The record gives the reactivity of an RNA of 177 nucleotides to DMS and 2A3. The reactions ran in a buffer of 150 mM KOAc, 10 mM MgCl2 and 150 mM bicine (pH 8.5), at 24 C. For DMS the reverse transcriptase was MarathonRT.

RNA sequence: GGGAACGACUCGAGUAGAGUCGAAAAGACCAUCAAUGCCUUCGCUGCGCUGGCAGGUGAGAUUAUUCUCGAUGACCAGCCUUAUAUUCAGGCCACUCAUGGAUGGUUAGCACAGCAGCAGCACUGCCUGGCUUAUGAACUUCGGUUCAUAAGCCAGAAAAGAAACAACAACAACAAC
Reactivity to DMS in 0.01 (KOAc 150mM, MgCl2 10mM, bicine 150mM(pH8.5), 24C), signal-to-noise 2, nucleotides 027 to 126: g010a120c030c010a040u000c020a110a080u000g010c040c010u000u010c160g030c050u010g030c160g060c010u000g010g020c030a000g010g020u010g020a010g000a080u000u000a220u010u000c010u000c000g010a190u000g000a140c070c000a060g020c010c060u010u010a110u000a150u000u010c100a040g010g020c020c140a090c200u000c100a060u000g020g010a010u000g000g010u010u000a040g000c090a070c070a050g000c010a080g020c040a070g010c020a280c090u010g000c090
Reactivity to 2A3 in 0.01 (KOAc 150mM, MgCl2 10mM, bicine 150mM(pH8.5), 24C), signal-to-noise 3, nucleotides 027 to 126: g000a000c010c000a030u040c030a030a130u110g000c000c020u110u130c130g030c120u070g050c060g020c040u020g000g040c030a180g140g300u180g030a010g010a010u100u220a170u300u070c000u000c030g080a100u070g080a120c020c030a010g020c020c000u100u150a200u020a040u090u190c030a000g040g000c000c050a090c020u140c060a080u090g060g020a020u010g020g010u030u050a030g010c040a040c000a060g000c010a010g000c000a000g020c000a010c040u040g030c010